RNA sequence: GGGAACGACUCGAGUAGAGUCGAAAAGAGGAUUCAACGAGCUUCGUAGCAACGAUAGCAACGUAGCUUUUGCUACGACCCUAGCUAUCGAGGGUAGCUACGUCCCCUGCUCGAGGGGAGAAUCCGACAUCGCUGCGGUAUUCGUACCGCAGCGAUGAAAAGAAACAACAACAACAAC
Reactivity to DMS in 0.01 (KOAc 150mM, MgCl2 10mM, bicine 150mM(pH8.5), 24C), signal-to-noise 1, nucleotides 027 to 126: g050a180g020g000a010u000u000c040a060a070c110g020a210g040c140u010u000c010g040u000a010g020c010a110a140c040g000a010u000a040g020c000a120a190c000g020u000a030g000c000u000u000u000u000g020c020u000a000c000g000a120c080c110c030u000a070g000c060u000a010u000c010g000a040g020g040g050u000a110g000c000u000a000c010g020u010c000c020c000c000u000g030c140u000c080g000a010g010g010g000g010a040g000a000a000u000c000c000g010a290
Reactivity to 2A3 in 0.01 (KOAc 150mM, MgCl2 10mM, bicine 150mM(pH8.5), 24C), signal-to-noise 1, nucleotides 027 to 126: g200a010g000g010a010u020u040c050a080a040c070g140a040g050c050u030u010c000g010u010a000g000c000a070a060c020g020a020u000a010g000c000a030a030c010g000u000a000g000c000u050u180u300u300g000c000u000a000c000g080a190c080c010c000u060a010g000c010u010a000u040c000g020a080g090g140g020u090a040g020c000u040a020c000g020u030c020c020c000c000u030g000c050u020c070g090a020g000g010g000g000a040g000a010a000u000c000c010g010a050